[RMDB]
RNA sequence: GGGAACGACUCGAGUAGAGUCGAAAACUCGUCUGGUUCGCCAGACGAGAAAGAAAAUCCGAGCGAAGGGAAGGGCACAAACGCUCGGAGUGCGCAAACCCAAAACGUGGGGGUUCGCCCCCACGAAGUCUCCAUUAUUGUUCGCAAUAAUGGAGACAAAAGAAACAACAACAACAAC
Reactivity to 2A3 in 0.01 (KOAc 150mM, MgCl2 10mM, bicine 150mM(pH8.5), 24C), signal-to-noise 4, nucleotides 027 to 126: c010u000c000g010u000c000u000g020g040u050u060c190g060c060c000a000g000a000c000g000a000g010a000a020a000g000a000a090a010a020u010c000c000g010a000g000c010g070a090a050g060g020g080a090a130g070g060g010c090a040c030a160a160a030c060g010c000u000c010g010g010a010g000u060g020c130g000c020a060a120a170c010c000c000a020a080a020a040c020g000u000g000g000g000g000g010u010u010c150g090c000c000c000c000c000a000c000g000a000a010
Reactivity to DMS in 0.01 (KOAc 150mM, MgCl2 10mM, bicine 150mM(pH8.5), 24C), signal-to-noise 3, nucleotides 027 to 126: c010u010c000g010u000c000u000g000g000u000u010c230g040c000c000a010g010a010c000g020a000g000a010a070a080g000a100a060a130a080u010c010c000g000a020g020c010g010a190a130g020g010g020a110a070g000g000g050c110a100c050a090a080a210c020g000c010u000c000g000g010a010g030u000g020c070g040c120a070a120a160c010c010c000a080a070a120a160c020g030u010g000g000g000g000g010u000u010c160g000c020c000c000c000c000a010c010g010a010a080